[RMDB]
RNA sequence: GGGAACGACUCGAGUAGAGUCGAAAAACGCUCGAAGAUGACAAUGCCACCGUGCUCGAUCUGAGGAACUCCUCCAAUUCCAGUGCUCCGCCAGGACCGCGGCAUGUUGGCAGCACUGCAUCCUCCGAGUUCCGAUUACUUUCGAGUAAUCGGAACUAAAAGAAACAACAACAACAAC
Reactivity to DMS in 0.01 (KOAc 150mM, MgCl2 10mM, bicine 150mM(pH8.5), 24C), signal-to-noise 1, nucleotides 027 to 126: a090c190g000c050u000c040g020a060a030g020a030u000g020a080c040a090a080u010g000c000c000a040c090c040g000u010g000c030u000c030g010a040u000c020u000g000a190g020g020a100a090c070u000c020c010u010c080c080a090a120u000u000c090c080a130g000u000g000c040u000c060c020g000c080c060a180g000g020a020c010c030g040c170g000g020c040a030u010g000u020u000g030g000c010a020g040c050a080c060u000g000c060a030u000c010c020u000c070c060g000
Background
This 177-nucleotide RNA was probed chemically with DMS. Source: RMDB library OK2TST, as collected in RNAgym. For DMS the reverse transcriptase was MarathonRT.